Source information: This 207-nucleotide RNA was probed chemically with 2A3. Values cover nucleotides 27 to 156. The data come from the RNA Mapping Database (RMDB), library OK3TST. For 2A3, 756 sequencing reads were counted. The RNA was probed in 150 mM KOAc, 10 mM MgCl2 and 150 mM bicine (pH 8.5) at 24 C.
[RMDB]
RNA sequence: GGGAACGACUCGAGUAGAGUCGAAAAACAACAGAUAGCUGGAACCAGCGUAGAAUUCUACGCAUAUCCAUAGCGAAUGGUACCUGUAAAGAAAAUAAAAUUGGAUGUACAAGUACCAACAGCCGAUUAUGCCAUGGUGAUGUCAAUCACAUAUGCAGCCGAAAAUUACUUUCGAGUAAUUUUCGGCAAAAGAAACAACAACAACAAC
Reactivity to 2A3 in 0.01 (KOAc 150mM, MgCl2 10mM, bicine 150mM(pH8.5), 24C), signal-to-noise 1, nucleotides 027 to 156: a000c030a060a000c040a040g090a130u130a050g070c030u010g030g000a100a080c010c040a070g030c000g000u010a040g050a190a290u300u130c000u000a010c000g000c000a010u030a020u040c010c000a040u080a030g010c010g080a080a050u060g000g000u010a000c000c000u000g000u030a030a020a010g050a030a120a100a000u220a050a150a070a070u050u050g000g020a020u050g000u010a000c000a000a050g000u000a010c000c000a000a020c000a030g120c010c080g020a030u070u110a030u180g060c040c020a010u060g010g120u000g000a000u060g100u070c040a060a000u030c010a010c000a060u080a040u080g020c030a000